[RMDB]
RNA sequence: GGGAACGACUCGAGUAGAGUCGAAAAUGUGCUAUUAUGUCAUUUGUUGUGCGUACAGCAAGUGGCACAACUUUCACUAUGAACCCUCAUAGUGGAAGUGAUUGUUGUGCGUACAGCAGGUGGUACAACUUUCACUAUGAUGGGUCAUAGUGGAAAACGUGUGCACUCUGUUCGCAGAGUGCAUACGAAAAGAAACAACAACAACAAC
Reactivity to 2A3 in 0.01 (KOAc 150mM, MgCl2 10mM, bicine 150mM(pH8.5), 24C), signal-to-noise 5, nucleotides 027 to 156: u130g030u030g030c060u050a050u190u030a060u090g010u010c000a010u000u000u000g000u010u000g010u010g120c120g070u180a000c000a000g000c000a000a010g020u020g020g000c020a000c010a010a030c000u000u000u000c000a000c000u000a000u000g000a050a070c000c000c000u000c000a000u000a000g000u000g000g000a000a010g010u030g040a070u020u050g020u010u010g030u010g030c020g010u060a030c010a000g000c000a000g020g030u070g010g010u030a030c000a020a010c000u000u010u000c000a000c000u000a000u000g020a020u110g010g010g000u000c000a000u000a000g000u000g000g000a000a010a000a010
Reactivity to DMS in 0.01 (KOAc 150mM, MgCl2 10mM, bicine 150mM(pH8.5), 24C), signal-to-noise 3, nucleotides 027 to 156: u010g030u000g030c060u000a130u000u010a040u000g020u000c000a010u000u000u000g000u010u000g020u000g040c300g040u010a100c040a030g020c010a050a030g040u010g020g000c020a010c030a040a050c070u000u010u000c000a010c000u000a010u000g000a030a130c020c010c050u000c010a000u000a020g020u010g000g010a000a010g020u000g020a070u000u000g010u000u000g020u000g020c170g030u000a110c040a040g000c040a070g000g010u010g010g010u010a060c060a120a070c040u000u000u000c000a010c000u000a010u000g020a060u030g020g010g020u000c010a000u000a010g020u000g030g010a010a020a110a180